[RMDB]
RNA sequence: GGGAACGACUCGAGUAGAGUCGAAAAGGCUUCUAAAGUUGGAGGGUAAUGCGUGAGGCUGGUUUCACAGAGCAGCGACUACUUCCCGCUUACAGCAGUGGACGGAUCACAGUUUAGCGUCGCUCAGAACCACUAUGGCCUGCUGGUCCGAUCUCAUUCUUCUAGUUAGGUUCGCCUAACUAGAAGAAAAAGAAACAACAACAACAAC
Reactivity to 2A3 in 0.01 (KOAc 150mM, MgCl2 10mM, bicine 150mM(pH8.5), 24C), signal-to-noise 3, nucleotides 027 to 156: g030g000c000u070u030c040u170a120a040a100g070u090u070g000g010a020g020g000g000u090a100a050u110g040c030g030u030g030a010g040g000c020u020g020g020u030u100u190c100a060c000a020g040a020g050c040a000g000c000g040a030c030u060a030c020u030u020c000c040c010g000c010u040u110a050c040a080g020c030a010g040u060g090g030a010c000g020g000a030u070c020a010c010a100g010u030u060u120a030g020c030g050u030c060g000c020u120c030a040g030a100a020c000c010a020c090u060a090u140g030g000c000c010u010g010c070u020g010g020u000c020c010g030a120u000c030u000c020a040u030
Reactivity to DMS in 0.01 (KOAc 150mM, MgCl2 10mM, bicine 150mM(pH8.5), 24C), signal-to-noise 1, nucleotides 027 to 156: g000g000c010u010u000c040u000a060a080a140g000u020u010g060g050a060g000g040g020u010a050a040u020g030c080g030u020g010a110g060g040c020u000g030g010u000u000u000c120a160c000a180g010a070g050c020a130g070c040g000a080c010u000a100c060u000u000c020c000c010g040c080u010u000a080c050a160g030c020a120g000u000g020g000a080c010g000g000a050u000c030a150c110a060g020u000u000u000a000g030c070g020u020c080g000c080u010c130a180g030a110a070c040c020a040c010u000a100u010g000g020c030c030u010g020c010u000g000g020u000c070c000g010a180u000c000u000c030a300u000